[RMDB]
RNA sequence: GGGAACGACUCGAGUAGAGUCGAAAAAGAGAGAUGCGAGGUCUCACAGUGCGAUGAUGGAGGAGCCGAUGGGGAACAUAGUAUACCAGGGCGAGAGAUGAAAUGCCAAGACCCCUGGUGGACUGAGGAAGCGGAAUAUAUUCGUAUAUUCCGCUUCAAAAGAAACAACAACAACAAC
Reactivity to DMS in 0.01 (KOAc 150mM, MgCl2 10mM, bicine 150mM(pH8.5), 24C), signal-to-noise 9, nucleotides 027 to 126: a070g010a100g010a050g000a050u020g000c090g010a090g000g000u000c050u000c050a100c100a050g010u020g020c070g020a070u000g010a080u020g010g000a060g010g010a060g010c050c040g000a060u010g010g000g000g010a050a070c140a070u020a050g010u000a070u010a030c020c010a020g000g000g010c050g020a140g010a080g000a070u010g000a080a090a070u070g010c070c050a060a070g000a270c300c000c000c000u000g010g000u000g000g000a040c020u010g010a150g020
Reactivity to 2A3 in 0.01 (KOAc 150mM, MgCl2 10mM, bicine 150mM(pH8.5), 24C), signal-to-noise 5, nucleotides 027 to 126: a000g150a000g000a000g010a010u080g030c110g020a040g030g040u020c010u030c030a050c030a010g080u080g060c030g040a050u040g020a040u050g070g030a030g010g020a010g000c000c030g050a090u090g020g000g020g000a030a000c020a040u130a010g030u030a020u010a030c000c000a000g010g000g010c070g030a090g010a010g000a080u100g150a070a100a060u270g070c040c000a030a010g040a100c000c000c000c000u000g000g000u000g000g000a010c010u030g010a030g220
Source: RMDB libraries RFM100 and RFMREP, as collected in RNAgym.
Chemical mapping of a 177-nucleotide RNA with DMS and 2A3.
Conditions: 150 mM KOAc, 10 mM MgCl2 and 150 mM bicine (pH 8.5), 24 C.
For 2A3 the reverse transcriptase was SuperScript II with manganese.
Reactivities are rounded to 0.1 and cut off at 0 and 3.
For DMS the reverse transcriptase was MarathonRT.